[RMDB]
RNA sequence: GGGAACGACUCGAGUAGAGUCGAAAAUGAGUUUGCAAAGGGCUCUGGAGCUGGGGCUUCAUUAGCAUCGUGGUGAAUCGGGCUCUGCCAUGUGCCCCCUCCCUGUGUAUUCACAUCCACCCUGCAUGCCCUCCUUGUGUGCAUACACCUGCCCUCAACUCUCGAUGAGAUUCGUCUCAUCGAGAGUAAAAGAAACAACAACAACAAC
Reactivity to 2A3 in 0.01 (KOAc 150mM, MgCl2 10mM, bicine 150mM(pH8.5), 24C), signal-to-noise 1, nucleotides 027 to 156: u160g010a050g090u120u150u070g000c060a060a050a060g060g000g000c030u040c120u210g030g010a080g000c220u140g060g000g000g000c050u100u060c110a050u100u220a020g040c040a040u110c060g030u030g060g020u130g130a130a120u110c040g000g050g000c030u030c010u060g030c000c000a000u050g020u090g000c000c000c000c000c000u020c010c030c000u000g040u000g020u040a060u110u070c080a040c000a000u000c010c000a070c080c030c000u060g000c090a100u230g000c010c000c000u040c030c000u060u070g020u000g000u020g000c020a000u030a030c000a000c010c000u040g010c010c040c000u100c050a000